[RMDB]
RNA sequence: GGGAACGACUCGAGUAGAGUCGAAAAGAUAUGGAAGACUGGCAAGCAACAGCUACAGGGUCGGAAACGACCCGUAGACAUGCUUGCAGUCUUCCUAAGUCAAAAGAAGCAACUUCGGUUGCUUCAAGGUAUCAGUAAAGUUCGCUUUACUGAUACCAAAAGAAACAACAACAACAAC
Reactivity to 2A3 in 0.01 (KOAc 150mM, MgCl2 10mM, bicine 150mM(pH8.5), 24C), signal-to-noise 4, nucleotides 027 to 126: g000a010u050a010u090g000g010a000a010g010a010c030u160g220g260c020a010a000g000c050a080a120c040a300g020c000u020a030c170a300g020g000g000u000c010g010g000a030a040a000c010g010a010c010c010c000g000u000a000g010a000c010a060u300g000c000u000u000g010c000a000g000u000c000u000u000c000c000u000a000a000g000u000c010a050a020a000a120g000a010a000g000c000a000a000c020u100u220c300g150g010u010u010g010c000u000u000c000a000a000
Reactivity to DMS in 0.01 (KOAc 150mM, MgCl2 10mM, bicine 150mM(pH8.5), 24C), signal-to-noise 5, nucleotides 027 to 126: g010a040u000a300u010g000g010a010a020g010a020c000u010g020g030c000a000a010g020c000a080a100c300a170g010c010u000a000c010a150g050g010g020u000c000g000g010a060a070a250c000g010a000c000c000c010g000u000a000g000a040c080a240u000g000c010u000u000g010c000a000g000u000c000u000u010c000c000u000a010a060g000u010c030a100a090a090a120g000a030a010g010c000a010a000c000u000u010c190g060g000u000u000g010c000u000u000c000a030a050